[RMDB]
This 177-nucleotide RNA was probed chemically with DMS and 2A3.
Conditions: 150 mM KOAc, 10 mM MgCl2 and 150 mM bicine (pH 8.5), 24 C.
High DMS reactivity at an A or C suggests that its Watson-Crick edge is free.
Source: RMDB library OK2TST, as collected in RNAgym.
RNA sequence: GGGAACGACUCGAGUAGAGUCGAAAAUUGGUCAAACAACUGAGGGUGAAAAAUCUCACACCAAAAGGAUCUACCGAGCUUCCGCUUUCCUUUGUGAACACGUAUGGAUUCAUCAAGCCGUUGCUCAGACAUUAGGACGGUUCGCCGUCCUAAUGUCAAAAGAAACAACAACAACAAC
Reactivity to DMS in 0.01 (KOAc 150mM, MgCl2 10mM, bicine 150mM(pH8.5), 24C), signal-to-noise 1, nucleotides 027 to 126: u010u000g010g000u000c160a150a080a090c140a070a060c150u000g010a170g010g000g030u010g000a040a110a060a080a060u000c050u000c010a050c060a020c010c010a010a030a100a120g000g000a050u000c010u000a040c050c020g010a010g000c110u010u000c020c030g020c070u000u000u000c020c030u000u000u000g000u010g000a020a050c160a070c070g000u010a100u000g010g020a080u020u000c040a070u000c080a040a040g010c140c080g010u000u010g000c020u000c060a200
Reactivity to 2A3 in 0.01 (KOAc 150mM, MgCl2 10mM, bicine 150mM(pH8.5), 24C), signal-to-noise 1, nucleotides 027 to 126: u030u020g020g000u100c050a110a060a160c020a080a080c080u120g030a040g020g090g010u100g060a060a040a020a060a070u060c030u020c080a000c020a020c020c000a030a000a000a060g060g000a020u000c000u010a010c010c020g020a000g000c000u070u020c010c070g040c040u030u020u030c010c000u040u130u210g000u030g030a000a030c020a010c120g020u060a050u190g090g060a090u120u050c020a030u060c050a070a000g000c020c030g070u090u060g000c020u000c030a010